[RMDB]
RNA sequence: GGGAACGACUCGAGUAGAGUCGAAAACUAUUUAUAGACAGAACAGUGGAAAACGUAUAUCGCUAUAAACCUUACACGCCGACUCUUCCAGUCGUACGAUUCCACAUAGGCGAGGCAUAAGCGAAAGCGUAGGCGGAGUCUUCGGACUCCGCCUACGAAAAGAAACAACAACAACAAC
Reactivity to 2A3 in 0.01 (KOAc 150mM, MgCl2 10mM, bicine 150mM(pH8.5), 24C), signal-to-noise 1, nucleotides 027 to 126: c000u000a010u000u020u040a020u050a010g060a000c000a000g070a110a030c020a040g030u060g030g130a090a140a000a000c000g000u000a100u100a060u060c060g000c040u000a000u080a080a110a120c000c020u040u040a000c150a100c070g030c030c000g010a000c000u000c000u020u000c040c030a010g000u000c000g030u030a030c030g080a000u030u000c000c000a000c000a010u060a040g000g070c040g010a000g000g000c000a040u000a240a030g000c000g110a140a080a010g010